Chemical mapping of a 207-nucleotide RNA with DMS and 2A3. The 2A3 profile rests on 3,617 reads. The RNA was probed in 150 mM KOAc, 10 mM MgCl2 and 150 mM bicine (pH 8.5) at 24 C. For DMS the reverse transcriptase was MarathonRT. For 2A3 the reverse transcriptase was SuperScript II with manganese.
RNA sequence: GGGAACGACUCGAGUAGAGUCGAAAAUUGAAUUUAUUAUAAACCGUAAGAAGCGCACGGUAGUAUGUAUGCUUCGCGAUUUGGGACGUAACAGGGUUUGCUCCCGAGGUAUCGCAAAGUGCGCACCCGGAGACGUAUUCAACUCGCACAUCGGCCGCGUAGUAAUCACAUUCGUGUGAUUACUACGAAAAGAAACAACAACAACAAC
Reactivity to DMS in 0.01 (KOAc 150mM, MgCl2 10mM, bicine 150mM(pH8.5), 24C), signal-to-noise 2, nucleotides 027 to 156: u010u000g020a120a170u000u000u000a060u020u000a190u010a110a060a070c020c000g040u000a120a190g030a070a050g040c030g010c030a050c000g010g010u010a080g050u010a040u000g000u010a090u000g010c010u000u000c010g000c020g030a030u010u000u010g000g010g020a080c040g030u010a040a090c090a190g010g020g010u010u000u000g010c040u010c000c000c030g020a050g010g000u000a120u000c050g040c050a050a040a050g020u010g020c010g020c110a050c060c000c030g010g000a140g010a100c020g010u010a120u000u000c060a030a050c070u010c030g060c070a130c050a070u000c010g020g020c000c040g000
Reactivity to 2A3 in 0.01 (KOAc 150mM, MgCl2 10mM, bicine 150mM(pH8.5), 24C), signal-to-noise 5, nucleotides 027 to 156: u050u020g020a030a020u140u110u080a160u210u160a130u110a160a110a050c010c010g000u020a080a030g020a090a030g030c020g000c020a010c010g070g010u060a080g040u050a080u150g130u020a070u170g020c010u050u060c070g000c010g010a020u000u020u050g000g010g010a010c070g020u030a100a060c100a180g140g000g110u040u030u070g010c020u020c020c010c000g000a070g050g060u170a050u120c010g000c020a030a100a060g040u040g020c000g000c010a020c000c000c000g010g020a110g030a050c040g000u030a190u020u030c000a030a030c020u020c040g000c010a050c030a170u090c040g070g000c030c050g030